[RMDB]
RNA sequence: GGGAACGACUCGAGUAGAGUCGAAAAUCAUACUUAUUGCAUUCAGAUACACGUCUCUUGAAUAAGAGAAAAAGUAACCACAGUUGCAGUUAGCUCCCUAGGGAUUCCACACAACCCUUGGCCUAUUUUAUCUCUGCACUAAGGGAGUGUAUUCUGAUCGUACUGCUAUGUUCGCAUAGCAGUACGAAAAAGAAACAACAACAACAAC
Reactivity to 2A3 in 0.01 (KOAc 150mM, MgCl2 10mM, bicine 150mM(pH8.5), 24C), signal-to-noise 3, nucleotides 027 to 156: u100c030a050u100a230c090u180u160a170u130u230g100c060a080u060u040c000a000g000a000u010a000c000a000c050g180u000c000u000c000u010u020g070a150a080u170a160a000g010a010g130a030a080a020a010a000g090u080a020a030c050c020a030c060a190g030u050u050g000c000a030g020u040u050a010g010c020u090c020c010c000u050a050g050g000g060a080u150u010c100c050a050c010a010c010a100a180c000c000c000u000u030g020g020c010c000u040a050u070u100u110u050a200u060c030u000c000u020g050c120a060c080u040a010a030g000g000g020a020g000u000g010u010a030u150u070c000u000g000a010
Reactivity to DMS in 0.01 (KOAc 150mM, MgCl2 10mM, bicine 150mM(pH8.5), 24C), signal-to-noise 2, nucleotides 027 to 156: u010c010a120u000a050c030u000u010a010u000u000g000c040a180u030u000c000a020g000a080u000a050c010a040c010g000u000c000u000c000u010u010g010a130a150u020a110a010g000a040g010a030a030a010a080a040g030u000a050a060c020c000a020c230a040g020u000u000g020c000a080g010u000u000a130g040c300u000c010c000c050u010a110g040g020g000a080u010u000c040c110a040c040a010c020a040a040c010c020c040u020u020g040g020c030c030u000a060u000u000u000u000a100u040c000u000c020u000g020c140a080c200u010a040a010g040g020g000a210g000u000g020u000a050u000u010c010u000g000a140

An RNA of 207 nucleotides, treated with 2A3 and DMS and read out base by base.